[RMDB]
RNA sequence: GGGAACGACUCGAGUAGAGUCGAAAACUGAGGAAAGAAGAGGAGGUGGAGGCCCUUCAUCUGUUAUCACAAAACUGCAGGAGGUUCAAGCUUCCAGGGCUUUGUGAGUCAUCCAUCUCCCAGUGUUCAGAAGAAGCUGGGACCCAAAGAGAUGAAAGAUACGAUCCUAGUUCGCUAGGAUCGUAUCAAAAGAAACAACAACAACAAC
Reactivity to 2A3 in 0.01 (KOAc 150mM, MgCl2 10mM, bicine 150mM(pH8.5), 24C), signal-to-noise 1, nucleotides 027 to 156: c030u060g020a050g040g000a060a040a060g030a020a000g020a080g040g010a000g010g000u050g010g060a060g010g060c000c000c000u060u040c020a100u060c020u080g110u110u090a020u030c020a010c010a030a070a110a020c030u140g070c100a060g000g020a010g050g010u170u300c120a130a050g020c000u000u000c000c030a050g050g070g000c010u020u010u010g000u000g010a020g020u100c000a040u010c000c020a070u020c010u000c030c000c000a000g010u030g160u010u080c070a140g020a250a020g000a000a000g220c000u010g010g010g010a010c030c000c050a030a090a010g070a000g030a020u060g060a040a070a090
Chemical mapping of a 207-nucleotide RNA with 2A3. For 2A3 the reverse transcriptase was SuperScript II with manganese. The reactions ran in a buffer of 150 mM KOAc, 10 mM MgCl2 and 150 mM bicine (pH 8.5), at 24 C. The data come from the RNA Mapping Database (RMDB), library OK3TST. For 2A3, 811 sequencing reads were counted.